Source: RMDB library TTRINS, as collected in RNAgym.
Chemical mapping of a 177-nucleotide RNA with DMS.
The RNA was probed in 150 mM KOAc, 10 mM MgCl2 and 150 mM bicine (pH 8.5) at 24 C.
Values cover nucleotides 27 to 126.
RNA sequence: GGGAACGACUCGAGUAGAGUCGAAAAGAUAUGGAGUAAGGGAGCGCUCGUCCUAGACAGGCCGGAUGGUCGGAAACGACCAUGUCGCCUGUCUAGGACGAGAACUACGCUCCCUACUCCUAAGUCACUAUAUCAUGCGGUUCGCCGCAUGAUAUAGAAAAGAAACAACAACAACAAC
Reactivity to DMS in 0.01 (KOAc 150mM, MgCl2 10mM, bicine 150mM(pH8.5), 24C), signal-to-noise 2, nucleotides 027 to 126: g020a090u000a300u000g000g000a030g020u000a080a070g030g000g010a010g020c010g000c000u000c000g000u010c000c000u010a010g040a020c030a000g040g020c080c010g000g000a020u000g000g020u000c000g020g000a100a190a300c000g030a060c000c000a000u000g010u000c300g000c010c000u000g000u000c000u000a000g000g000a000c020g000a000g000a010a030c260u000a300c000g010c000u000c000c020c000u000a000c000u000c020c000u010a020a020g000u000c090a300